Source: RMDB library TTRDEL, as collected in RNAgym. The record gives the reactivity of an RNA of 177 nucleotides to DMS and 2A3. For DMS the reverse transcriptase was MarathonRT. For 2A3, 11,957 sequencing reads were counted. High 2A3 reactivity points to a flexible backbone, as in loops and unpaired stretches.
RNA sequence: GGGAACGACUCGAGUAGAGUCGAAAAGAUAUGGAUCGUCACAGGGAGGAGUGUCGGAAACGACACCCAUCGAUCUGUACGAUCCUAAGUCAAAACGGUGUCUUAUUGUUCGCAAUAAGACACCGAACAGCUUUAUACACUUCGGUGUAUAAAGCUGAAAAGAAACAACAACAACAAC
Reactivity to DMS in 0.01 (KOAc 150mM, MgCl2 10mM, bicine 150mM(pH8.5), 24C), signal-to-noise 3, nucleotides 027 to 126: g000a040u000a180u000g000g000a000u000c000g010u000c200a020c020a020g000g030g010a160g020g000a060g010u000g010u000c010g020g010a030a040a110c000g010a010c000a000c000c000c000a080u010c030g010a140u000c000u000g000u010a020c010g000a010u000c010c000u000a000a070g010u010c030a120a060a100a160c020g000g010u000g000u000c000u000u000a000u000u000g020u000u020c250g010c000a020a000u000a020a000g010a000c000a000c010c000g000a000a060
Reactivity to 2A3 in 0.01 (KOAc 150mM, MgCl2 10mM, bicine 150mM(pH8.5), 24C), signal-to-noise 4, nucleotides 027 to 126: g030a000u040a020u090g000g000a000u010c030g030u080c220a030c010a050g230g120g000a020g000g020a160g040u000g000u010c010g020g000a040a030a020c020g000a010c010a000c000c010c020a110u190c030g080a120u060c010u010g000u000a000c000g010a000u000c000c000u000a010a010g020u010c020a010a010a090a120c020g000g000u000g000u020c000u000u000a020u000u010g070u070u100c300g020c150a010a000u000a000a000g000a000c000a000c000c000g000a000a000
Reactivities are given for positions 27 through 126.